Record summary: An RNA of 177 nucleotides, treated with 2A3 and DMS and read out base by base. 2A3 is a SHAPE reagent: it acylates the 2'-hydroxyl of flexible nucleotides of all four kinds. The reactions ran in a buffer of 150 mM KOAc, 10 mM MgCl2 and 150 mM bicine (pH 8.5), at 24 C. For 2A3 the reverse transcriptase was SuperScript II with manganese.
[RMDB]
RNA sequence: GGGAACGACUCGAGUAGAGUCGAAAACACGCCAGAUCCGCAAUGCUUGCCGUUCCUCGCGCUCGACGUGCUCGGUGGAUUCGUGCGCUGUCGUCGCACGCACGCGCGCAUGCGCGAACACAGGCGACUCAAAAUCGCAUUUCGAUGCGAUUUUGAGAAAAGAAACAACAACAACAAC
Reactivity to 2A3 in 0.01 (KOAc 150mM, MgCl2 10mM, bicine 150mM(pH8.5), 24C), signal-to-noise 2, nucleotides 027 to 126: c030a020c030g030c000c010a010g030a150u050c000c040g050c100a140a140u090g040c040u030u110g030c040c000g060u040u070c020c010u020c030g000c000g000c030u070c140g140a160c000g050u010g000c020u040c040g120g070u050g080g040a070u140u070c010g000u020g020c020g030c080u120g140u200c070g060u080c000g030c050a000c020g030c000a000c010g050c000g010c000g000c000a040u110g030c040g000c020g030a060a000c140a000c000a040g060g000c010g060a010
Reactivity to DMS in 0.01 (KOAc 150mM, MgCl2 10mM, bicine 150mM(pH8.5), 24C), signal-to-noise 2, nucleotides 027 to 126: c050a110c110g020c030c000a080g040a050u000c010c040g020c030a100a080u000g000c070u000u010g020c010c010g000u000u010c030c010u010c090g020c050g000c030u000c050g010a130c080g010u000g050c000u000c050g030g040u010g010g000a220u000u010c060g010u000g000c020g010c060u000g010u010c110g010u000c030g010c060a020c060g010c070a050c040g000c040g000c070g010c130a090u000g000c060g010c020g000a030a070c090a060c110a140g010g000c030g000a120